[RMDB]
The record gives the reactivity of an RNA of 177 nucleotides to DMS and 2A3. For 2A3 the reverse transcriptase was SuperScript II with manganese. Conditions: 150 mM KOAc, 10 mM MgCl2 and 150 mM bicine (pH 8.5), 24 C.
RNA sequence: GGGAACGACUCGAGUAGAGUCGAAAAAGCGUCAUCGUACGCGAUGACGCAAAAACAGAGAAGUCAACCAGAGAAACACACGUUGUGGUAUAUUACCUGGUAACACUGCUACUACGGUAGCAGUGAAGUUAGGAAGGCUGUUCGCAGCCUUCCUAACAAAAGAAACAACAACAACAAC
Reactivity to DMS in 0.01 (KOAc 150mM, MgCl2 10mM, bicine 150mM(pH8.5), 24C), signal-to-noise 2, nucleotides 027 to 126: a100g070c000g000u010c000a000u000c000g100u010a000c300g050c000g050a000u000g000a000c020g000c030a020a020a010a060a040c200a070g020a140g070a090a110g000u070c140a060a100c000c000a030g000a030g000a100a140a120c120a040c070a070c100g040u040u020g000u000g000g000u020a070u020a040u010u000a180c150c010u000g020g000u000a110a300c010a000c000u000g010c000u000a020c000u000a070c120g000g000u000a000g020c010a000g000u000g000a030a040
Reactivity to 2A3 in 0.01 (KOAc 150mM, MgCl2 10mM, bicine 150mM(pH8.5), 24C), signal-to-noise 4, nucleotides 027 to 126: a000g000c000g010u010c000a000u010c010g010u020a020c230g000c010g090a000u000g000a000c000g020c000a010a010a010a010a010c110a010g110a000g030a180a020g090u140c070a040a030c010c000a000g020a020g020a040a110a000c000a010c010a010c150g090u160u190g020u130g030g090u070a090u020a060u150u090a070c000c000u000g000g000u000a030a010c000a000c020u010g000c000u010a000c010u020a010c140g100g000u020a000g000c000a000g000u000g000a010a010